[RMDB]
RNA sequence: GGGAACGACUCGAGUAGAGUCGAAAACUGUACAGAUACAAUUCAAAACGAUUUAAAGAAUCUUUGUCUAUUCAGAAUCCAGCACAAUUGUUUCUGGAACAAAUAUUAUUCUCUCACAAACCUAUAAAGAUUAUGUCAUGUUCGCAUGACAUAAUCUAAAAGAAACAACAACAACAAC
Reactivity to DMS in 0.01 (KOAc 150mM, MgCl2 10mM, bicine 150mM(pH8.5), 24C), signal-to-noise 1, nucleotides 027 to 126: c140u000g000u000a080c080a020g000a060u020a020c020a050a020u000u000c120a070a180a210a300c300g020a000u000u020u000a080a150a270g000a060a000u000c020u030u000u000g000u020c060u000a050u000u000c020a080g000a060a000u000c000c050a080g020c300a030c300a020a020u000u000g000u000u000u000c000u020g000g050a090a000c020a000a020a050u000a030u020u030a030u020u000c050u000c000u000c170a130c110a030a120a100c200c090u000a030u000a050a050